[RMDB]
RNA sequence: GGGAACGACUCGAGUAGAGUCGAAAAAAAACGAGCGUAAUCGCGUCUUGACUAGACUGUUAGUGACGUGAGUAGGGAUCUAUCCCAGUGUGCAUAGCGCACAAUACGGUGAUUAACAGUCACGGAACUGUAGCAUAUUCUUCGGAAUAUGCUACAGAAAAGAAACAACAACAACAAC
Reactivity to 2A3 in 0.01 (KOAc 150mM, MgCl2 10mM, bicine 150mM(pH8.5), 24C), signal-to-noise 4, nucleotides 027 to 126: a020a000a000a000c080g010a040g000c030g050u100a110a100u120c050g010c010g100u050c020u040u100g050a070c020u040a050g010a040c020u010g010u020u010a020g010u020g110a020c030g020u050g070a050g040u110a130g020g000g000a030u050c050u150a120u060c030c000c000a020g020u000g000u020g020c060a160u170a220g050c030g000c030a000c000a000a010u140a030c050g090g000u060g030a010u000u010a010a010c020a010g000u000c030a010c070g030g020a070a060
Reactivity to DMS in 0.01 (KOAc 150mM, MgCl2 10mM, bicine 150mM(pH8.5), 24C), signal-to-noise 5, nucleotides 027 to 126: a020a020a030a060c080g010a040g010c050g020u000a110a110u000c060g010c030g000u000c020u000u000g010a120c110u000a100g010a050c060u000g010u000u000a000g030u000g000a040c010g020u010g010a080g030u010a090g010g010g000a060u010c150u010a080u010c000c000c000a140g010u000g010u000g010c000a160u000a120g000c150g020c010a010c010a030a120u000a030c050g000g010u000g000a010u000u000a040a030c080a060g020u000c000a070c130g010g010a060a150